[RMDB]
RNA sequence: GGGAACGACUCGAGUAGAGUCGAAAACGAAUAGGCUGGAUAAACGAGCAAGACAAUCGCCAACAAAACCAUCGAAUAGUUAGAAGGCAGGAUCUUGAGGAGGUUGUAGUACCAAGAUUGAGGCCUACAUUUAGGGUCAGUUCGCUGACCCUAAAUGAAAAGAAACAACAACAACAAC
Reactivity to DMS in 0.01 (KOAc 150mM, MgCl2 10mM, bicine 150mM(pH8.5), 24C), signal-to-noise 4, nucleotides 027 to 126: c090g020a110a100u000a050g000g020c010u020g020g010a100u000a060a060a140c090g000a170g000c040a020a020g010a030c090a130a070u020c130g020c020c020a070a210c070a050a060a070a070c020c070a050u020c140g000a110a180u010a070g010u000u000a170g010a060a260g000g010c030a060g000g010a070u000c010u000u000g020a070g010g010a130g010g010u010u000g000u000a040g000u000a110c000c020a020a080g010a100u000u010g010a190g000g010c030c010u000a090
Reactivity to 2A3 in 0.01 (KOAc 150mM, MgCl2 10mM, bicine 150mM(pH8.5), 24C), signal-to-noise 1, nucleotides 027 to 126: c000g010a010a090u050a010g020g000c010u000g000g080a130u050a150a090a050c120g030a030g030c030a020a000g010a030c040a020a080u110c070g000c030c010a000a010c020a000a100a000a010c000c000a070u150c060g080a100a100u040a160g060u030u020a060g030a240a010g010g000c020a000g090g040a120u050c010u000u080g040a170g040g000a030g000g060u070u200g050u140a060g000u000a030c000c000a000a050g080a070u050u150g000a050g000g030c000c020u050a060